[RMDB]
RNA sequence: GGGAACGACUCGAGUAGAGUCGAAAAUGUUAUUCCAUUUGCUCCAGUCGCUCCUGUAUUUCCUGUUGGUCCUGUAGAGCCUGUUAUUCCAUUUGCUCCAGUUGCUCCUUUGUUUCCUGUUGGACCUAGCAUGGGUAGGAUUCGUCCUACCCAUGCUAAAAGAAACAACAACAACAAC
Reactivity to 2A3 in 0.01 (KOAc 150mM, MgCl2 10mM, bicine 150mM(pH8.5), 24C), signal-to-noise 2, nucleotides 027 to 126: u290g050u140u130a160u170u040c060c000a000u080u040u090g060c000u000c000c020a030g000u000c000g000c040u000c000c050u070g080u040a180u000u120u060c010c010u070g050u070u040g060g050u100c000c020u030g080u120a060g010a010g050c000c000u010g070u140u030a090u140u000c030c030a120u080u030u070g030c040u030c000c010a080g030u060u050g060c000u030c030c000u080u070u020g010u000u040u000c000c020u030g010u020u020g020g000a000c060c020u020